[RMDB]
RNA sequence: GGGAACGACUCGAGUAGAGUCGAAAAGAUAUGGACCCUGAACUACGAGGGAACAGCCGAAGAACUCGGAAACGAGGGAGGCUGGGAACUCGCAGGGUCCUAAGUCAAACAAGCCUUCGGGCUUGAACAUGAAAUUAGUGUUCGCACUAAUUUCAUGAAAAGAAACAACAACAACAAC
Reactivity to 2A3 in 0.01 (KOAc 150mM, MgCl2 10mM, bicine 150mM(pH8.5), 24C), signal-to-noise 3, nucleotides 027 to 126: g020a010u080a060u130g030g010a010c000c010c000u000g010a110a060c110u110a040c250g010a010g000g030g000a030a010c010a000g000c000c000g180a290a070g020a070a030c010u010c010g040g000a110a030a040c020g000a010g000g020g000a010g000g000c000u000g000g000g000a010a010c010u000c000g000c000a000g030g010g000u000c000c000u000a010a010g000u000c000a020a030a070c000a010a000g000c010c000u090u110c280g070g000g020c010u000u000g000a030a030
Reactivity to DMS in 0.01 (KOAc 150mM, MgCl2 10mM, bicine 150mM(pH8.5), 24C), signal-to-noise 6, nucleotides 027 to 126: g010a050u010a300u000g010g000a020c010c000c010u000g020a160a060c150u020a300c030g010a010g020g000g010a300a220c000a010g010c000c000g020a090a140g020a110a210c000u000c000g000g010a100a080a240c000g010a010g010g000g000a070g010g010c000u000g000g000g000a300a160c000u000c000g000c000a010g000g000g000u000c000c010u000a010a060g000u000c030a120a140a290c010a000a010g010c000c000u000u020c170g010g000g000c000u000u000g000a070a220